An RNA of 177 nucleotides, treated with DMS and read out base by base.
RNA sequence: GGGAACGACUCGAGUAGAGUCGAAAACAGCCGGAGGUUUGUGGCGUCUGUGCCAGUUACUUUCCGUUAGUGGCGGCGCUGUCCACAUGAUGCGGAAAGCUGUAACCUGAGCGUGAUGGGAACGGCGGCCAGAGCUAAUGUUCGCAUUAGCUCUGGCAAAAGAAACAACAACAACAAC
Reactivity to DMS in 0.01 (KOAc 150mM, MgCl2 10mM, bicine 150mM(pH8.5), 24C), signal-to-noise 2, nucleotides 027 to 126: c060a140g020c010c010g030g000a070g000g000u000u000u000g020u000g020g020c080g000u000c120u000g000u010g020c030c010a010g000u000u000a070c010u000u000u000c000c010g000u000u000a300g040u000g000g000c100g020g010c040g020c140u000g010u020c000c000a050c010a060u000g000a090u010g030c010g000g000a000a000a020g010c070u010g010u000a030a060c090c020u000g000a160g020c050g030u010g000a090u000g030g010g000a120a080c020g030g020c030g000

Source: RMDB library OK2TRN, as collected in RNAgym.